[RMDB]
RNA sequence: GGGAACGACUCGAGUAGAGUCGAAAAGCGCCCCUUUUCGAAGGGGCGCACUGGAAAUAAAGCCGAAAGCCUAGGCAUUCCUUAUUUGGCGAAAGCCUGCCACUAUUGAGAUCUUCGGAUCUCAAAAGAAAUUCAAACUAUUCGUAGUUUGAAUUUCAAAAGAAACAACAACAACAAC
Reactivity to DMS in 0.01 (KOAc 150mM, MgCl2 10mM, bicine 150mM(pH8.5), 24C), signal-to-noise 3, nucleotides 027 to 126: g000c000g000c000c000c000c000u010u000u000u000c150g000a030a010g000g010g010g020c020g010c000a020c060u000g020g010a090a090a070u000a070a140a140g020c020c010g010a100a100a160g020c050c020u000a100g000g010c030a080u000u000c010c000u000u000a140u000u010u000g010g020c000g010a100a140a130g010c030c020u010g000c060c050a090c230u010a120u000u000g000a000g000a000u000c000u010u010c210g010g010a020u000c000u000c000a000a010a040a140
Reactivity to 2A3 in 0.01 (KOAc 150mM, MgCl2 10mM, bicine 150mM(pH8.5), 24C), signal-to-noise 4, nucleotides 027 to 126: g000c000g020c000c010c030c000u000u040u030u070c180g100a010a000g000g000g000g020c010g000c000a000c000u010g020g070a030a040a090u140a070a160a030g020c020c020g060a130a090a020g030c020c020u050a030g020g000c000a050u020u050c000c000u070u110a180u110u130u070g020g000c010g010a050a020a010g040c020c020u050g040c030c030a080c070u080a170u130u070g000a000g000a000u000c010u040u070c240g080g000a000u000c000u010c020a000a000a000a000
An RNA of 177 nucleotides, treated with DMS and 2A3 and read out base by base. The 2A3 profile rests on 5,275 reads. Conditions: 150 mM KOAc, 10 mM MgCl2 and 150 mM bicine (pH 8.5), 24 C. For DMS, 2,537 sequencing reads were counted. It was measured as part of the RMDB library M2PK50.